RNA sequence: GGGAACGACUCGAGUAGAGUCGAAAAACCCCUUCUUAUUUGGGGGCUAGCGCUGAAAGUGAGAAAGUACCAAUGUGAACCUGAUUCAAUCUGUCACUACUACUAAGCUUUGGAAUGCAGUUCAGGACAGUGUCUUCAAAUUCGUUUGAAGACACUGAAAAGAAACAACAACAACAAC
Reactivity to 2A3 in 0.01 (KOAc 150mM, MgCl2 10mM, bicine 150mM(pH8.5), 24C), signal-to-noise 4, nucleotides 027 to 126: a000c020c010c000c010u070u000c020u060u210a300u130u120u060g030g000g000g010g000c020u040a040g000c020g010c070u070g080a100a050a030g040u060g030a050g040a060a100a000g040u070a030c050c090a070a070u150g030u040g090a050a100c030c050u050g010a090u120u080c030a050a150u040c020u050g030u070c010a010c040u100a030c010u020a030c020u070a110a030g030c000u060u040u020g020g040a070a020u100g030c020a020g010u050u030c020a020g000g050a020
Reactivity to DMS in 0.01 (KOAc 150mM, MgCl2 10mM, bicine 150mM(pH8.5), 24C), signal-to-noise 5, nucleotides 027 to 126: a070c030c000c010c120u000u010c090u010u000a110u000u000u000g010g000g010g010g000c020u000a070g010c120g010c030u000g000a120a060a060g020u010g010a080g000a080a060a080g010u000a060c100c080a050a100u010g010u000g010a070a070c040c050u000g010a070u020u010c130a070a080u000c060u010g000u000c030a050c030u010a080c090u000a090c110u010a070a130g000c050u000u000u000g010g010a070a050u000g000c050a050g010u000u000c040a050g010g010a300
Chemical mapping of a 177-nucleotide RNA with 2A3 and DMS. The reactions ran in a buffer of 150 mM KOAc, 10 mM MgCl2 and 150 mM bicine (pH 8.5), at 24 C. DMS adducts were read by reverse transcription with MarathonRT. The 2A3 profile rests on 5,159 reads.